[RMDB]
An RNA of 207 nucleotides, treated with 2A3 and read out base by base. It was measured as part of the RMDB library OK3TST. The reactions ran in a buffer of 150 mM KOAc, 10 mM MgCl2 and 150 mM bicine (pH 8.5), at 24 C.
RNA sequence: GGGAACGACUCGAGUAGAGUCGAAAAGGAUGUAUGUAGACUCCGUCUUGCACCGCGGCCCUGAUAAUAUCCACCACCGUAGAAUAAGCCACACCAAGCCAAGCAAUACACUCGCUCUGCGAGCGGCAGACAGGAGGAGCGGGGAGAGACGGAAGGAUACGAUACUUUGGUUCGCCAAAGUAUCGUAAAAAGAAACAACAACAACAAC
Reactivity to 2A3 in 0.01 (KOAc 150mM, MgCl2 10mM, bicine 150mM(pH8.5), 24C), signal-to-noise 2, nucleotides 027 to 156: g110g050a060u080g000u170a130u070g060u070a060g080a090c010u020c000c000g000u000c010u050u110g010c150a010c120c000g000c010g040g110c010c010c000u030g030a020u030a250a060u070a090u060c020c010a000c070c040a020c000c040g080u080a050g050a140a020u120a140a050g000c000c030a130c010a010c060c050a020a050g010c010c010a100a000g000c060a160a000u040a090c050a000c080u010c040g000c000u070c090u220g030c010g050a030g050c120g010g000c000a000g030a070c020a000g060g000a050g000g040a010g000c030g010g000g010g020a080g000a000g000a010c000g010g000a020a000g010g020a000